Chemical mapping of a 177-nucleotide RNA with DMS and 2A3. The RNA was probed in 150 mM KOAc, 10 mM MgCl2 and 150 mM bicine (pH 8.5) at 24 C. 2A3 adducts were read by reverse transcription with SuperScript II with manganese. For DMS the reverse transcriptase was MarathonRT. Reactivities are rounded to 0.1 and cut off at 0 and 3. It was measured as part of the RMDB library OK2TRN.
RNA sequence: GGGAACGACUCGAGUAGAGUCGAAAACGUGUUUACCGCUGAUCCGGCGAAAGAUCCAACCGCAACCAUGUACGAGCAACUGACUUACAGCGAAGUGCUGGAAAAAGAGCUGAAAGUCAUGGACCUGCCUAAGUCGUGUAUUCGUACACGACUUAGGAAAAGAAACAACAACAACAAC
Reactivity to DMS in 0.01 (KOAc 150mM, MgCl2 10mM, bicine 150mM(pH8.5), 24C), signal-to-noise 4, nucleotides 027 to 126: c150g020u000g000u000u000u000a090c050c030g020c050u000g000a070u010c100c020g010g020c070g010a060a060a070g000a080u000c050c040a070a100c050c040g010c110a060a100c030c010a050u000g020u000a040c060g010a070g000c040a070a060c080u000g010a080c030u000u000a140c020a000g000c000g010a140a110g000u010g000c030u010g000g020a100a030a040a070a040g000a250g010c020u000g010a050a050a090g020u010c020a020u010g010g000a140c120c070u000g010
Reactivity to 2A3 in 0.01 (KOAc 150mM, MgCl2 10mM, bicine 150mM(pH8.5), 24C), signal-to-noise 3, nucleotides 027 to 126: c030g030u060g060u090u100u040a080c030c020g000c050u040g040a120u040c030c020g050g000c020g080a090a060a030g060a040u030c020c030a020a050c040c040g010c030a020a050c010c010a030u040g060u100a040c010g020a020g010c020a050a070c020u050g030a020c000u080u150a030c030a000g000c020g070a190a050g130u130g100c070u050g060g000a030a040a020a010a000g050a020g030c020u020g000a120a040a000g000u040c000a010u030g000g030a030c020c010u110g020